Chemical mapping of a 177-nucleotide RNA with DMS.

RNA sequence: GGGAACGACUCGAGUAGAGUCGAAAAGAUAUGGAUGAGCCCUCUGCAGUGGUAGGCCGAUAAGAAGGUAUCGGAAACGAUACUCUUCUUUUGACGGCUGUACACUGCAGAGGGCUCAUCCUAAGUCGAUUGAUGUUAUGUUCGCAUAACAUCAAUCAAAAGAAACAACAACAACAAC
Reactivity to DMS in 0.01 (KOAc 150mM, MgCl2 10mM, bicine 150mM(pH8.5), 24C), signal-to-noise 4, nucleotides 027 to 126: g000a110u010a300u010g000g020a010u000g010a010g000c000c000c010u010c000u000g010c000a030g030u010g020g010u030a300g000g010c000c000g030a150u000a020a000g000a030a010g000g000u010a000u000c000g000g010a130a100a220c000g010a010u000a000c000u010c000u000u000c000u000u000u000u010g010a290c130g010g000c000u000g000u000a300c010a030c000u000g000c000a000g000a000g000g000g000c000u000c000a000u000c000c000u000a020a080g010u010c110
Reactivities are given for positions 27 through 126. The DMS profile rests on 4,863 reads.